Background: Conditions: 150 mM KOAc, 10 mM MgCl2 and 150 mM bicine (pH 8.5), 24 C. An RNA of 177 nucleotides, treated with 2A3 and DMS and read out base by base.
RNA sequence: GGGAACGACUCGAGUAGAGUCGAAAAGAUAUGGAUCGUGUACCCACUGACGAAGUCGGAAACGAUCGAAGUGGUACCGAUCCUAAGUCAAAACUUCGGUACCAAGCUUCGGCUUGGUACCGAAGAACAAGUGCUAUCAGUUCGCUGAUAGCACUUGAAAAGAAACAACAACAACAAC
Reactivity to 2A3 in 0.01 (KOAc 150mM, MgCl2 10mM, bicine 150mM(pH8.5), 24C), signal-to-noise 3, nucleotides 027 to 126: g010a030u080a040u110g010g000a010u000c010g030u040g030u300a040c050c090c060a020c020u070g120a220c020g120a200a090g300u040c040g020g030a090a110a070c030g000a030u050c020g010a030a000g000u020g000g000u000a000c000c000g000a000u000c000c000u000a020a020g050u030c040a010a020a150a160c000u010u000c000g030g000u010a010c000c000a010a010g030c020u120u290c300g060g020c000u000u000g000g010u000a000c010c000g000a000a000g010a000a000
Reactivity to DMS in 0.01 (KOAc 150mM, MgCl2 10mM, bicine 150mM(pH8.5), 24C), signal-to-noise 3, nucleotides 027 to 126: g000a030u020a300u000g000g000a020u000c000g000u020g020u000a000c100c060c070a030c020u010g000a250c210g020a110a160g010u000c030g020g000a080a100a180c000g000a000u000c000g000a300a020g030u000g000g010u000a010c020c000g010a010u000c000c000u010a010a090g040u010c030a090a080a080a130c010u000u000c010g000g010u000a000c000c000a000a040g000c000u010u000c200g030g030c000u010u000g000g010u010a010c000c000g010a000a000g020a060a150